[RMDB]
RNA sequence: GGGAACGACUCGAGUAGAGUCGAAAAAACAUACUACAAAAAAAAUAGUUGCAAAUAACGACAACUACGCUUUAGCAGCUUAAUGCUAACCGAUGCAAGAAUUGACUGUGGUUUGAAGCAUCGGCUAAACACACAGUCUAGCCAAGCUAUAUUGCUUCAUGAAAAUUCACUUCGGUGAAUUUUCAUGAAAAGAAACAACAACAACAAC
Reactivity to 2A3 in 0.01 (KOAc 150mM, MgCl2 10mM, bicine 150mM(pH8.5), 24C), signal-to-noise 1, nucleotides 027 to 156: a010a000c130a100u300a120c040u110a050c200a070a040a020a020a000a040a020a120u090a040g010u000u000g000c030a020a100a300u140a300a000c080g150a150c000a000a000c000u100a020c060g020c050u000u010u010a000g000c010a000g000c000u110u230a050a000u070g000c000u010a020a020c000c000g000a000u000g010c000a000a040g030a030a050u000u000g010a000c000u000g000u000g010g080u040u030u150g030a050a010g000c000a000u020c000g000g000c000u120a150a090a000c030a000c010a010c000a050g000u010c000u000a000g070c000c030a080a000g000c010u080a080u070a100u260u260g050c010u040u030